This 177-nucleotide RNA was probed chemically with 2A3 and DMS.
RNA sequence: GGGAACGACUCGAGUAGAGUCGAAAAAGUGCCCUAUUCGAGGCACUGCAGUCUCGAUAGAAAGGCUAAGAACGUCGCAAUGACGUAAGGUGGGACUUUUCCUUCUGGAACCUAGCGGUUGGUUCCGCUACCUAUCUGCCUUCGGGCAGAUAGGUAGAAAAGAAACAACAACAACAAC
Reactivity to 2A3 in 0.01 (KOAc 150mM, MgCl2 10mM, bicine 150mM(pH8.5), 24C), signal-to-noise 2, nucleotides 027 to 126: a000g060u100g070c000c030c000u060a100u040u100c050g000a020g010g000c020a010c170u090g080c010a010g010u010c000u000c010g020a000u010a020g080a030a040a000g060g020c030u030a080a020g090a120a050c000g000u000c010g010c220a250a180u300g010a000c010g000u010a030a060g130g030u090g000g000g000a010c000u090u010u060u000c000c000u060u080c120u150g020g000a010a010c010c010u000a040g160c110g180g200u090u060g020g000u030u000c000c010g000
Reactivity to DMS in 0.01 (KOAc 150mM, MgCl2 10mM, bicine 150mM(pH8.5), 24C), signal-to-noise 2, nucleotides 027 to 126: a040g000u000g000c010c000c010u000a140u010u010c050g020a060g040g000c020a050c110u030g040c210a100g010u000c010u010c020g000a050u010a050g000a110a140a070g010g000c020u000a090a160g000a150a030c020g010u000c000g010c200a130a100u020g000a010c010g010u000a010a060g020g020u010g030g010g020a060c050u000u000u000u000c010c020u000u000c120u020g020g010a030a020c030c010u000a100g010c110g030g000u010u000g000g010u000u000c000c010g000
For 2A3 the reverse transcriptase was SuperScript II with manganese. The data come from the RNA Mapping Database (RMDB), library VIROID. The 2A3 profile rests on 1,549 reads. For DMS the reverse transcriptase was MarathonRT.